This 207-nucleotide RNA was probed chemically with 2A3 and DMS. Reactivities are rounded to 0.1 and cut off at 0 and 3. The DMS profile rests on 4,143 reads.

[RMDB]
RNA sequence: GGGAACGACUCGAGUAGAGUCGAAAAGUCAGGGCUUCGGCCCUGACAAAAACCGUAGGUGUGAUGACCUACGAGUGCAACAGCUUGCUUCGAAAGAGGCAAGACAUGCACGAGUAGCAAGCACCUAAACGGAAAAAGCUUUUGUUCGCAAAAGCAACUUAAUACACAGGUUCGCCUGUGUAUUAAGAAAAGAAACAACAACAACAAC
Reactivity to 2A3 in 0.01 (KOAc 150mM, MgCl2 10mM, bicine 150mM(pH8.5), 24C), signal-to-noise 4, nucleotides 027 to 156: g010u000c000a010g000g010g000c030u070u180c300g130g000c010c000c010u010g000a000c000a000a000a000a020a000c010c000g000u000a010g000g000u030g010u030g030a260u130g050a080c000c020u000a020c010g010a020g000u000g000c010a090a090c020a110g040c010u000u010g000c000u020u010c010g070a120a090a060g010a010g000g000c000a000a000g000a070c020a060u030g000c000a000c010g010a000g000u010a000g000c040a140a030g000c000a010c000c000u020a090a120a010c020g010g050a070a060a060a060a010g000c010u000u030u010u010g030u070u160c210g000c220a000a010a010a000g010c000a010a000
Reactivity to DMS in 0.01 (KOAc 150mM, MgCl2 10mM, bicine 150mM(pH8.5), 24C), signal-to-noise 2, nucleotides 027 to 156: g000u000c000a020g000g050g050c000u000u000c300g050g040c010c000c000u000g010a000c000a030a020a060a020a110c010c000g000u000a050g000g030u010g060u000g040a120u010g010a190c300c010u000a000c000g000a270g020u000g010c000a010a100c080a130g010c000u000u000g000c000u000u000c000g000a160a130a210g000a040g010g020c000a020a000g100a050c070a300u000g000c020a040c010g040a300g020u010a040g020c020a050a300g010c000a070c000c000u000a000a030a050c020g000g000a040a040a070a100a110g000c000u000u000u000u000g000u000u030c230g000c020a030a010a020a040g000c020a080a100